This 177-nucleotide RNA was probed chemically with 2A3. For 2A3, 787 sequencing reads were counted.
RNA sequence: GGGAACGACUCGAGUAGAGUCGAAAAAAAGAUGUGGAACGCACCUUUGCAGAGAUUAAACCAUUAUAUGAACAACUUCAUGCUUAUGUGAGGGCAAAGUUGAUGCAUACCUACCCUUCCUAUAUCACGAUAACGGCAGGUUCGCCUGCCGUUAUCGAAAAGAAACAACAACAACAAC
Reactivity to 2A3 in 0.01 (KOAc 150mM, MgCl2 10mM, bicine 150mM(pH8.5), 24C), signal-to-noise 2, nucleotides 027 to 126: a000a010a000g070a050u170g030u070g060g000a110a050c060g020c020a020c000c010u000u010u040g040c040a020g060a020g000a290u050u230a140a010a070c050c000a050u170u050a050u050a010u090g040a050a050c050a030a000c110u050u040c000a020u070g100c020u030u040a040u180g010u020g110a090g020g020g000c030a010a000a000g040u060u070g000a100u010g010c000a010u010a140c000c000u120a120c070c000c000u000u000c040c000u100a140u000a000u100c220a140
The reactions ran in a buffer of 150 mM KOAc, 10 mM MgCl2 and 150 mM bicine (pH 8.5), at 24 C.